The record gives the reactivity of an RNA of 177 nucleotides to DMS. Conditions: 150 mM KOAc, 10 mM MgCl2 and 150 mM bicine (pH 8.5), 24 C.
RNA sequence: GGGAACGACUCGAGUAGAGUCGAAAACUCUAGGUAAGAUGUGUAAUCCUCUAACUGCUGUGCUGCAUGCUAGCUGUCAUUUUAGAGGUUGCAAUGUGCUGGGGCAGCACAGGUGAAAACGAGAUGACUUGGACCUUGGAUUCGUCCAAGGUCCAAGAAAAGAAACAACAACAACAAC
Reactivity to DMS in 0.01 (KOAc 150mM, MgCl2 10mM, bicine 150mM(pH8.5), 24C), signal-to-noise 1, nucleotides 027 to 126: c030u000c040u000a050g000g030u010a100a110g000a050u010g000u000g000u000a140a060u000c000c020u000c060u000a070a090c100u000g020c000u010g010u000g000c000u030g040c010a060u010g000c000u010a010g010c020u000g020u030c050a060u010u000u010u030a080g010a060g020g030u010u000g010c130a090a070u010g020u020g020c000u000g000g010g000g000c020a020g020c010a000c000a020g000g000u000g010a100a030a080a100c100g020a120g020a100u000g000a120
For DMS the reverse transcriptase was MarathonRT. Reactivities are given for positions 27 through 126.